[RMDB]
RNA sequence: GGGAACGACUCGAGUAGAGUCGAAAACGCCGAUAGCAUCGUGAAGAUGCAGAGGAGGGGACGAACCGGCCGUGGCAAACCGGGAACGUACUACCAGGUAUGUCCCCAGGCUGACACGAGCGGCAUAACGUACAUGGUUCUUCGGAACCAUGUACGUAAAAGAAACAACAACAACAAC
Reactivity to DMS in 0.01 (KOAc 150mM, MgCl2 10mM, bicine 150mM(pH8.5), 24C), signal-to-noise 2, nucleotides 027 to 126: c150g020c020c010g010a300u010a100g000c020a040u020c000g010u000g020a130a190g000a000u000g020c000a050g000a260g010g000a070g010g040g000g000a110c120g000a110a090c010c020g000g000c080c000g050u020g020g010c030a010a000a110c030c020g000g000g000a010a010c030g000u000a010c010u000a210c300c300a140g000g010u000a000u000g010u000c010c000c000c000a050g020g010c130u000g000a030c000a000c030g010a070g010c010g000g000c120a080u010a130
Reactivity to 2A3 in 0.01 (KOAc 150mM, MgCl2 10mM, bicine 150mM(pH8.5), 24C), signal-to-noise 1, nucleotides 027 to 126: c080g000c040c010g000a040u080a090g000c000a000u000c000g050u060g270a240a040g050a030u040g060c050a000g060a000g080g030a000g060g050g010g010a020c080g080a050a160c000c010g300g010c040c000g050u000g010g000c000a050a000a060c000c010g000g020g050a050a000c000g050u000a010c000u060a140c010c050a000g230g000u020a020u080g010u020c020c000c000c000a030g000g020c000u020g000a000c000a000c010g060a070g020c010g000g000c000a090u210a090

Chemical mapping of a 177-nucleotide RNA with DMS and 2A3. The reactions ran in a buffer of 150 mM KOAc, 10 mM MgCl2 and 150 mM bicine (pH 8.5), at 24 C. The DMS profile rests on 1,216 reads. 2A3 adducts were read by reverse transcription with SuperScript II with manganese. For 2A3, 978 sequencing reads were counted.